[RMDB]
RNA sequence: GGGAACGACUCGAGUAGAGUCGAAAAACCCCGCGUACCGGGGAUGGUGCGGCUCCGGUGGUUCGGGUCUGUCGCGGUUUGUGUAGUCUGUCGCGUCAGGGGGUGCACAGGCAGGGGGAAGACGUAAGGAGCAUCUUGGGUUCGCCUAAGAUGCUCCAAAAGAAACAACAACAACAAC
Reactivity to DMS in 0.01 (KOAc 150mM, MgCl2 10mM, bicine 150mM(pH8.5), 24C), signal-to-noise 3, nucleotides 027 to 126: a060c030c020c010c060g020c120g010u020a050c050c010g000g000g000g000a020u000g010g000u000g020c030g000g000c000u000c030c020g000g010u030g010g010u020u010c040g010g020g000u000c030u010g010u020c030g000c020g000g000u010u030u000g030u020g010u030a100g010u010c050u000g000u000c020g020c030g020u010c020a110g000g000g000g020g000u020g000c040a090c100a080g000g000c070a080g000g000g000g020g010a060a040g000a090c110g010u040a090a150
Reactivity to 2A3 in 0.01 (KOAc 150mM, MgCl2 10mM, bicine 150mM(pH8.5), 24C), signal-to-noise 2, nucleotides 027 to 126: a000c020c000c000c000g010c020g010u030a030c000c000g000g030g000g000a020u010g020g040u060g000c010g000g000c020u000c010c010g000g000u040g000g030u050u050c010g030g000g060u000c000u030g050u010c020g000c020g010g020u060u080u050g060u050g020u020a080g060u050c000u010g040u030c010g010c020g050u010c000a040g000g000g000g010g030u020g040c040a070c050a100g020g030c030a050g020g010g000g000g010a040a030g040a020c030g020u040a110a080